[RMDB]
RNA sequence: GGGAACGACUCGAGUAGAGUCGAAAAGGCACCGACGGACACUCCUUCUGACGUACAUUCUCACUCGCAUGGCGAGUCAGAGUCAUGACUGUGAGCGAGUACGAGUGAGGGUCAGUUCGAGUGUGCAGCUGUGCUGACUAUUCGUAGUCGGCACAGCAAAAGAAACAACAACAACAAC
Reactivity to DMS in 0.01 (KOAc 150mM, MgCl2 10mM, bicine 150mM(pH8.5), 24C), signal-to-noise 7, nucleotides 027 to 126: g000g010c120a140c020c010g010a120c140g010g000a040c010a070c030u000c000c020u000u000c010u000g000a050c010g010u010a080c100a100u000u010c000u000c050a030c000u000c040g000c010a040u010g010g010c000g010a070g010u000c040a020g010a220g010u010c160a070u000g000a030c010u010g010u000g010a090g010c060g000a060g010u010a050c060g000a040g010u000g010a110g010g010g000u000c030a020g010u000u000c150g010a040g010u000g010u000g000c040a120
Reactivity to 2A3 in 0.01 (KOAc 150mM, MgCl2 10mM, bicine 150mM(pH8.5), 24C), signal-to-noise 5, nucleotides 027 to 126: g070g000c040a010c030c000g080a070c050g020g000a000c000a010c020u010c010c000u010u000c000u000g020a010c000g040u070a010c010a030u040u010c000u000c010a000c000u010c010g000c010a020u140g090g000c030g070a020g060u020c030a030g010a020g130u060c020a060u030g020a030c000u020g010u020g060a020g010c020g010a020g010u010a010c030g000a010g010u030g000a040g100g050g000u010c020a000g000u000u010c000g010a010g020u080g000u030g040c000a010
An RNA of 177 nucleotides, treated with DMS and 2A3 and read out base by base. DMS adducts were read by reverse transcription with MarathonRT. Conditions: 150 mM KOAc, 10 mM MgCl2 and 150 mM bicine (pH 8.5), 24 C.